RNA sequence: GGGAACGACUCGAGUAGAGUCGAAAAAUUGGAAGGACUGAUGCUGAAGCUGAAACUCCAAUACUUUGGCCACCUGAUGGGAAGAACUGAAGGCAGGAGGAGAAGGGGAUGACAGAGGAUGAGAUGGCGUUAAGAGAACCUUCGGGUUCUCUUAACGAAAAGAAACAACAACAACAAC
Reactivity to DMS in 0.01 (KOAc 150mM, MgCl2 10mM, bicine 150mM(pH8.5), 24C), signal-to-noise 3, nucleotides 027 to 126: a070u010u000g030g000a060a050g010g020a160c260u010g010a140u000g000c020u010g040a120a160g000c030u000g010a120a070a100c050u010c030c030a030a040u000a080c130u000u000u000g020g010c040c030a100c050c020u010g010a080u000g020g000g020a060a050g030a060a080c090u000g000a060a060g000g010c080a070g000g010a060g000g000a060g000a060a070g000g000g000g010a080u000g010a080c110a050g010a080g000g000a080u000g010a070g000a050u010g010g000
Reactivity to 2A3 in 0.01 (KOAc 150mM, MgCl2 10mM, bicine 150mM(pH8.5), 24C), signal-to-noise 1, nucleotides 027 to 126: a000u050u060g050g020a090a000g020g000a010c010u030g020a040u020g000c070u150g130a100a040g010c000u010g000a070a050a040c010u000c010c000a000a030u080a130c030u020u100u040g020g030c020c000a030c020c030u040g050a110u150g060g040g030a110a000g060a130a020c030u100g030a060a000g080g000c010a040g000g070a050g000g020a040g020a000a040g050g010g000g000a000u090g000a000c050a030g050a020g010g020a030u070g010a040g020a110u090g070g000